The record gives the reactivity of an RNA of 177 nucleotides to DMS. The reactions ran in a buffer of 150 mM KOAc, 10 mM MgCl2 and 150 mM bicine (pH 8.5), at 24 C. The data come from the RNA Mapping Database (RMDB), library OK2TST.
RNA sequence: GGGAACGACUCGAGUAGAGUCGAAAAUAUUGUGUCAUUGACAGGAGAAGAUUGGGGAUCAUCGGUUAAAGGUUUCAAGAGAACAGGAUCUGCCCUUCAUCGAUUCAGUACAUCAAGGAUGAGCCAAAUUACGGGUCCUAUUCGUAGGACCCGUAAUAAAAGAAACAACAACAACAAC
Reactivity to DMS in 0.01 (KOAc 150mM, MgCl2 10mM, bicine 150mM(pH8.5), 24C), signal-to-noise 2, nucleotides 027 to 126: u030a110u010u030g030u000g020u000c090a070u000u000g000a070c100a080g000g030a090g000a110a070g000a100u010u010g020g000g020g000a120u000c030a040u000c070g010g000u000u010a060a100a140g020g000u000u010u030c130a040a200g030a070g000a090a060c090a070g000g000a040u000c050u030g000c060c030c000u010u000c130a040u000c040g000a070u000u000c060a100g020u020a120c230a030u000c060a030a040g000g000a050u020g000a060g000c020c020a050a020